[RMDB]
RNA sequence: GGGAACGACUCGAGUAGAGUCGAAAAGUACAUGGUCUAGAGCGAGUGAUCCUAGCUGAUCCUAGAUCCAUGUGUGACUGCGUCAUGAUGUGCCAUGGUACGAUCGUACCUACAGCAGUACGCUGAGCCCUUCGUCCAGUUUCGACUGGACGAAGGGAAAAGAAACAACAACAACAAC
Reactivity to DMS in 0.01 (KOAc 150mM, MgCl2 10mM, bicine 150mM(pH8.5), 24C), signal-to-noise 2, nucleotides 027 to 126: g010u000a010c000a000u000g000g000u010c000u000a000g000a070g000c150g030a040g000u010g020a080u000c030c010u000a120g030c070u000g000a090u020c210c010u000a010g010a020u020c020c020a010u000g010u010g000u010g000a170c050u000g000c040g010u000c100a070u010g010a070u010g030u000g020c140c090a090u040g010g040u000a000c000g000a160u000c180g020u000a010c010c000u010a050c090a070g010c020a060g030u020a010c030g010c020u000g010a120g000
Reactivity to 2A3 in 0.01 (KOAc 150mM, MgCl2 10mM, bicine 150mM(pH8.5), 24C), signal-to-noise 2, nucleotides 027 to 126: g050u040a010c000a000u030g000g030u000c010u000a010g000a020g050c060g100a030g120u100g030a080u070c000c060u050a040g040c110u030g020a050u090c000c000u000a020g000a040u040c050c010a000u020g010u000g030u030g050a030c050u010g010c000g010u050c060a090u060g100a030u040g020u090g100c080c090a180u210g000g000u010a010c010g110a300u210c210g030u000a020c000c010u010a010c040a010g000c030a000g010u030a000c010g010c010u030g020a050g050